[RMDB]
This 207-nucleotide RNA was probed chemically with 2A3 and DMS.
RNA sequence: GGGAACGACUCGAGUAGAGUCGAAAAGACUGUGCGUUUCCAUUUGAGUAUCCUGAAAACGGGCUUUUCAGCAUGGAACGUACAUAUUAAAUAGUAGGAGUGCAUAGUGGCCCGUAUAGCAGGCAUUGAGGCGAGGAUUGUUUCGACAAUCCUCGAAUGUAUAGUGACCGUUCGCGGUCACUAUACAAAAAGAAACAACAACAACAAC
Reactivity to 2A3 in 0.01 (KOAc 150mM, MgCl2 10mM, bicine 150mM(pH8.5), 24C), signal-to-noise 1, nucleotides 027 to 156: g030a000c070u020g000u010g000c010g000u010u070u020c000c020a010u180u090u030g030a030g070u190a110u050c000c000u040g050a170a000a000a050c050g010g000g100c020u130u050u050u020c030a000g000c040a020u080g030g000a080a010c010g000u020a000c000a000u010a000u000u210a070a060a050u090a010g050u050a000g070g040a030g070u060g030c010a070u070a090g030u020g070g000c000c000c000g010u020a020u150a070g000c000a010g010g060c080a000u040u080g050a070g040g040c000g000a000g010g000a000u000u000g010u000u010u100c070g020a020c000a000a000u000c010c020u000c000g010a000a000
Reactivity to DMS in 0.01 (KOAc 150mM, MgCl2 10mM, bicine 150mM(pH8.5), 24C), signal-to-noise 1, nucleotides 027 to 156: g010a070c110u010g000u010g020c030g000u000u000u000c020c020a150u020u010u000g000a220g020u000a060u000c030c020u000g010a100a030a140a090c050g030g020g010c040u000u010u000u000c050a210g000c110a060u010g010g000a090a060c020g000u000a070c020a110u000a020u000u010a040a120a140u020a150g000u000a100g010g010a150g020u000g030c060a080u000a160g000u000g010g030c010c010c040g060u000a100u010a170g020c060a000g000g000c090a150u000u010g000a130g000g000c030g030a030g030g000a020u000u000g010u000u010u000c230g040a090c020a020a000u000c000c000u000c000g000a020a030